[RMDB]
RNA sequence: GGGAACGACUCGAGUAGAGUCGAAAAUGGUGUCACUGGGAAAAGCCCAGAUUCAAAAAGGCUGGGCUCCGGAGUCAUGCACAUCCUCUCUCAGGUAUCCCUGUGCAGAAAACAGUGUCCACGGGGGGGACUUGUAUGUAUUCGUACAUACAAGUCCAAAAGAAACAACAACAACAAC
Reactivity to DMS in 0.01 (KOAc 150mM, MgCl2 10mM, bicine 150mM(pH8.5), 24C), signal-to-noise 3, nucleotides 027 to 126: u000g010g020u000g010u000c060a030c020u000g020g000g020a120a130a230a070g010c020c000c000a020g000a060u000u030c070a070a070a130a200a090g000g000c000u000g000g020g010c010u000c030c050g020g020a130g010u000c050a050u000g010c010a030c050a100u010c010c000u000c050u000c080u000c050a050g000g000u010a090u010c050c020c020u020g000u000g010c070a080g010a070a070a100a100c100a070g000u000g000u000c080c020a070c070g020g000g020g040g000
Reactivity to 2A3 in 0.01 (KOAc 150mM, MgCl2 10mM, bicine 150mM(pH8.5), 24C), signal-to-noise 2, nucleotides 027 to 126: u060g030g010u020g040u070c020a010c010u000g000g000g050a080a170a040a020g010c010c010c000a000g020a040u150u160c080a090a130a060a130a100g170g020c000u000g010g000g020c010u000c000c010g030g010a010g030u080c030a030u110g050c050a030c000a090u050c010c010u020c000u000c000u000c020a010g030g090u090a180u160c000c000c000u000g000u000g000c060a050g160a040a090a010a010c040a030g090u030g040u070c000c030a010c030g000g000g010g000g020
Source: RMDB library OK2TRN, as collected in RNAgym. This 177-nucleotide RNA was probed chemically with DMS and 2A3. The 2A3 profile rests on 2,763 reads. For DMS, 2,094 sequencing reads were counted. 2A3 adducts were read by reverse transcription with SuperScript II with manganese. DMS adducts were read by reverse transcription with MarathonRT.